[RMDB]
RNA sequence: GGGAACGACUCGAGUAGAGUCGAAAAUCAAAUAAUCUCGCCACGAGCGCCCGACAUCUUGAUAUUUACUUAGACCCCCGCUUAAGUAAAUAUGGCCAAGAUGAUGACAUAGUCUGAGCAACGUGGAAUAGAACACAUUGUUCGCAAUGUGUUCUAUAAAAGAAACAACAACAACAAC
Reactivity to DMS in 0.01 (KOAc 150mM, MgCl2 10mM, bicine 150mM(pH8.5), 24C), signal-to-noise 6, nucleotides 027 to 126: u040c110a090a080a090u040a100a090u010c020u000c060g010c010c020a030c030g000a160g000c120g010c010c020c050g020a230c010a010u000c000u000u000g000a050u000a010u000u000u000a000c010u000u000a010g000a170c040c010c030c030c050g010c100u020u000a000a010g010u000a000a010a010u000a010u010g010g020c300c020a010a010g000a020u000g000a110u000g010a050c070a110u020a130g020u010c030u010g010a120g010c010a080a090c020g010u000g000g000a140
Reactivity to 2A3 in 0.01 (KOAc 150mM, MgCl2 10mM, bicine 150mM(pH8.5), 24C), signal-to-noise 4, nucleotides 027 to 126: u090c020a030a050a040u180a060a100u090c050u040c060g010c010c000a010c020g020a020g050c040g020c010c010c020g030a020c000a010u000c000u010u010g030a000u000a000u020u000u000a010c020u010u010a080g150a260c000c000c000c010c020g040c040u050u060a000a000g000u000a000a000a000u020a010u030g110g030c060c000a000a010g000a000u020g030a060u080g010a010c030a100u170a040g050u010c030u070g040a020g050c020a030a070c010g010u020g010g000a010
An RNA of 177 nucleotides, treated with DMS and 2A3 and read out base by base.
DMS adducts were read by reverse transcription with MarathonRT.
It was measured as part of the RMDB libraries RFM100 and RFMREP.